[RMDB]
RNA sequence: GGGAACGACUCGAGUAGAGUCGAAAAGAUAUGGACACUCUAAGUUCUAUGAAGGUAACAAGUGUCGGAAACGACACCGCCCUGGAGAAUAUGAGUGUCCUAAGUCAAACAGACGUUCGCGUCUGAAUCAAUGUCAACCCUUCGGGGUUGACAUUGAAAAAGAAACAACAACAACAAC
Reactivity to 2A3 in 0.01 (KOAc 150mM, MgCl2 10mM, bicine 150mM(pH8.5), 24C), signal-to-noise 1, nucleotides 027 to 126: g050a010u090a040u050g020g000a020c000a030c000u000c000u040a300a190g090u020u060c000u000a270u210g180a170a050g070g020u180a300a000c110a150a300g030u000g010u040c020g010g000a040a030a010c000g030a000c000a010c000c040g050c010c010c020u100g060g090a010g010a010a010u080a070u160g010a020g030u000g000u010c000c000u000a010a000g000u000c010a100a030a100c000a030g030a020c020g100u110u170c300g000c030g040u000c010u000g040a040a030
Reactivity to DMS in 0.01 (KOAc 150mM, MgCl2 10mM, bicine 150mM(pH8.5), 24C), signal-to-noise 1, nucleotides 027 to 126: g000a080u000a300u000g000g000a020c000a010c000u000c000u000a090a190g000u000u000c010u010a110u000g010a120a120g000g000u010a090a110c260a090a160g000u000g010u000c000g000g000a070a050a300c030g000a000c000a000c000c160g030c070c020c000u000g030g000a050g000a000a010u000a300u000g000a010g000u000g000u000c000c000u000a000a030g030u000c040a140a130a240c000a000g000a010c000g020u000u020c300g000c030g020u000c000u000g010a120a150
An RNA of 177 nucleotides, treated with 2A3 and DMS and read out base by base.
For 2A3, 807 sequencing reads were counted.
For DMS the reverse transcriptase was MarathonRT.
Reactivities are rounded to 0.1 and cut off at 0 and 3.
For 2A3 the reverse transcriptase was SuperScript II with manganese.
The data come from the RNA Mapping Database (RMDB), library TTRDEL.
The reactions ran in a buffer of 150 mM KOAc, 10 mM MgCl2 and 150 mM bicine (pH 8.5), at 24 C.